[RMDB]
RNA sequence: GGGAACGACUCGAGUAGAGUCGAAAAUUAGUUAUAAUACCUCAGGGAUGUCUCCAUCCCAAGCAAGGGAGCUGAGACCUUACGCUCCUGCACUCCUGUCAUUGGCUAAGGGUCACUUUGGAGGAUAUAACUUCCAAGUACUUCCAGAUCUGCAGGACUACCAGUCCUGAUUCGUCAGGACUGGUAGAAAAGAAACAACAACAACAAC
Reactivity to DMS in 0.01 (KOAc 150mM, MgCl2 10mM, bicine 150mM(pH8.5), 24C), signal-to-noise 2, nucleotides 027 to 156: u010u010a080g040u040u000a080u000a120a110u000a130c050c020u000c050a070g000g020g010a050u010g000u000c030u030c110c020a250u000c010c000c020a090a060g030c040a140a140g000g010g010a070g000c070u030g020a140g000a170c040c040u000u000a110c130g000c060u000c020c020u000g030c110a060c090u000c010c020u020g010u000c090a120u000u000g010g060c150u000a100a120g000g030g040u000c100a060c060u000u000u020g000g000a060g000g030a170u000a120u010a090a100c000u000u000c010c000a020a080g010u000a050c020u020u010c020c030a160g000a050u000c020u000g020c050a040g040g010a240
Reactivity to 2A3 in 0.01 (KOAc 150mM, MgCl2 10mM, bicine 150mM(pH8.5), 24C), signal-to-noise 4, nucleotides 027 to 156: u070u030a030g040u040u120a080u050a260a120u110a230c010c020u060c100a040g020g010g010a020u020g090u090c050u060c170c010a030u020c010c020c020a000a000g040c030a020a110g000g000g010a000g000c020u060g030a020g060a120c020c020u040u060a040c050g000c010u000c000c000u020g000c040a050c010u030c000c010u050g090u190c080a130u090u110g040g000c020u040a070a120g040g010g000u070c030a010c030u070u150u140g000g010a010g000g050a010u090a020u060a250a050c000u040u000c010c000a020a000g020u040a040c020u070u040c030c000a050g000a230u060c050u080g010c010a000g000g020a010
An RNA of 207 nucleotides, treated with DMS and 2A3 and read out base by base. Values cover nucleotides 27 to 156. The RNA was probed in 150 mM KOAc, 10 mM MgCl2 and 150 mM bicine (pH 8.5) at 24 C.